[RMDB]
RNA sequence: GGGAACGACUCGAGUAGAGUCGAAAAGGCCUGACGUUCGCGUCAGGCCAAACCUCGAGGAGGAUGGAACACUGGGGGGAGCCGAUACCCAGGACAGGGCAGAAACUGUCCCGUUCGCGGGACAGAAUCAUUAAUCACACUUCGGUGUGAUUAAUGAAAAAGAAACAACAACAACAAC
Reactivity to 2A3 in 0.01 (KOAc 150mM, MgCl2 10mM, bicine 150mM(pH8.5), 24C), signal-to-noise 2, nucleotides 027 to 126: g000g010c000c000u000g000a020c000g000u030u100c280g030c000g140u010c010a000g010g010c020c000a010a000a000c000c010u040c010g070a040g020g020a020g030g000a030u060g060g030a100a010c040a020c140u040g010g000g030g000g000g000a000g010c000c010g030a040u080a080c020c000c000a000g010g040a030c020a010g000g010g020c030a020g090a020a140a030c000u000g000u000c000c020c000g020u000u040c240g020c010g040g000g000a000c000a000g000a000a010
Reactivity to DMS in 0.01 (KOAc 150mM, MgCl2 10mM, bicine 150mM(pH8.5), 24C), signal-to-noise 4, nucleotides 027 to 126: g010g010c010c000u010g030a030c010g020u000u010c200g030c020g020u010c000a010g020g010c010c000a010a040a070c040c010u000c080g020a070g020g000a070g000g000a060u010g010g010a100a070c090a070c060u000g010g000g000g020g010g000a080g000c040c040g000a080u000a070c050c010c030a090g000g000a090c090a060g000g000g000c090a090g010a070a080a150c020u000g010u000c010c000c000g010u000u010c170g020c020g010g000g000a010c020a010g000a060a090
Source information:
This 177-nucleotide RNA was probed chemically with 2A3 and DMS. DMS adducts were read by reverse transcription with MarathonRT. The RNA was probed in 150 mM KOAc, 10 mM MgCl2 and 150 mM bicine (pH 8.5) at 24 C. Source: RMDB library M2PK50, as collected in RNAgym. Values are in units of 0.01, from 0 to 300, in steps of 10.